The record gives the reactivity of an RNA of 177 nucleotides to DMS and 2A3.
2A3 adducts were read by reverse transcription with SuperScript II with manganese.
The RNA was probed in 150 mM KOAc, 10 mM MgCl2 and 150 mM bicine (pH 8.5) at 24 C.
Values cover nucleotides 27 to 126.
RNA sequence: GGGAACGACUCGAGUAGAGUCGAAAAUUGUCCGGGUUCGCCCGGACAAAGCGGGAGGCGACCGGAGGCCUCCUCCCAGGCGAUCCCAGGCCUCGCUCCGGAGCGUGAUGACCUUCGGGUCAUCAAAAUAAGGUGACAAAUUCGUUUGUCACCUUAUAAAAGAAACAACAACAACAAC
Reactivity to DMS in 0.01 (KOAc 150mM, MgCl2 10mM, bicine 150mM(pH8.5), 24C), signal-to-noise 4, nucleotides 027 to 126: u000u000g010u000c000c000g010g010g020u000u010c250g020c000c000c000g010g000a000c000a010a010a070g010c210g010g010g020a020g020g020c100g010a100c020c020g010g000a040g020g020c060c040u000c010c010u000c020c010c020a080g000g000c030g000a070u000c010c010c000a170g000g000c010c010u000c100g010c000u000c010c010g010g000a210g030c240g020u010g010a010u000g010a020c000c000u000u010c190g020g000g000u000c010a010u000c000a010a040a090
Reactivity to 2A3 in 0.01 (KOAc 150mM, MgCl2 10mM, bicine 150mM(pH8.5), 24C), signal-to-noise 2, nucleotides 027 to 126: u040u010g000u020c000c000g040g000g000u010u020c210g030c050c000c000g010g010a000c010a020a000a000g020c040g020g020g010a000g010g010c030g040a100c030c020g010g010a020g040g020c050c040u010c010c000u030c010c010c000a030g000g030c020g000a030u030c000c020c000a030g040g020c020c000u020c040g030c010u000c000c000g020g020a040g120c100g090u090g000a010u000g000a010c010c000u040u040c250g070g000g000u000c000a000u010c000a000a000a020